[RMDB]
RNA sequence: GGGAACGACUCGAGUAGAGUCGAAAAAUCAGCGUGCAACCCGUUGAUUGAAAUUGAACCGUCCUGUUAUCGAAAGAUAGGCAGAAGAUACGAAAUGUGUGACAGCAUGGGAAGUAAAGGCAGACCGAAUCGAUAUGCAAUUCGUUGCAUAUCGAUUAAAAGAAACAACAACAACAAC
Reactivity to DMS in 0.01 (KOAc 150mM, MgCl2 10mM, bicine 150mM(pH8.5), 24C), signal-to-noise 9, nucleotides 027 to 126: a020u010c010a010g010c000g010u010g000c120a050a090c090c080c010g000u010u000g010a040u000u010g010a060a100a130u020u010g010a110a110c060c030g010u010c060c000u000g010u010u000a020u000c020g000a120a090a100g000a030u000a040g010g010c030a010g000a110a100g000a090u010a060c090g000a060a090a040u010g000u000g010u010g010a100c100a110g000c040a040u000g000g020g000a070a070g010u010a030a050a070g010g010c050a060g000a110c050c050g010
Reactivity to 2A3 in 0.01 (KOAc 150mM, MgCl2 10mM, bicine 150mM(pH8.5), 24C), signal-to-noise 8, nucleotides 027 to 126: a000u020c020a010g000c000g000u060g030c040a040a030c020c000c000g000u010u020g010a050u010u050g070a050a090a070u100u130g040a060a050c020c000g030u060c010c000u010g020u040u020a030u040c020g030a040a040a030g020a020u040a020g080g010c020a000g020a160a020g020a030u090a080c040g030a040a060a080u080g040u020g030u050g030a040c010a030g010c010a050u050g000g000g050a090a040g030u140a100a040a060g060g000c010a010g030a050c000c040g030

Source information
Chemical mapping of a 177-nucleotide RNA with DMS and 2A3. Reactivities are given for positions 27 through 126. DMS adducts were read by reverse transcription with MarathonRT.